[RMDB]
RNA sequence: GGGAACGACUCGAGUAGAGUCGAAAACAUCGCGACUUCGGUCGCGAUGAAAGUUGUGCUCCCUCACGCAUAACAAAUCCCAAUGACGGUAGGUGACUGCAAAACGACACGCCUUCGGGCGUGUCAAAUCACCUGCAUAUUUCGAUAUGCAGGUGAUAAAAGAAACAACAACAACAAC
Reactivity to 2A3 in 0.01 (KOAc 150mM, MgCl2 10mM, bicine 150mM(pH8.5), 24C), signal-to-noise 1, nucleotides 027 to 126: c000a000u000c000g000c010g000a020c010u040u080c290g100g010u000c000g000c000g000a000u000g000a010a000a010g020u020u020g020u000g030c000u090c070c040c000u060c040a040c040g000c010a000u000a050a000c000a010a060a020u030c010c010c010a010a050u200g090a050c060g030g060u060a030g020g050u060g030a110c060u040g040c020a040a050a040a130c120g020a000c000a010c000g030c010c000u050u130c200g090g000g040c000g090u020g010u000c000a000a000
Reactivity to DMS in 0.01 (KOAc 150mM, MgCl2 10mM, bicine 150mM(pH8.5), 24C), signal-to-noise 3, nucleotides 027 to 126: c010a000u000c000g000c000g000a020c000u000u000c190g010g000u000c000g030c000g010a000u000g000a030a080a090g020u010u010g030u010g010c010u000c090c030c030u000c090a090c150g000c000a010u010a000a010c030a060a100a120u020c010c000c010a180a110u000g010a100c100g020g040u000a010g040g010u020g000a130c040u000g020c150a050a040a060a100c150g020a030c000a000c030g020c030c000u000u000c190g020g000g030c000g000u000g000u010c010a040a060
Chemical mapping of a 177-nucleotide RNA with 2A3 and DMS. The DMS profile rests on 2,488 reads. The 2A3 profile rests on 1,808 reads. The data come from the RNA Mapping Database (RMDB), library M2PK50. The reactions ran in a buffer of 150 mM KOAc, 10 mM MgCl2 and 150 mM bicine (pH 8.5), at 24 C.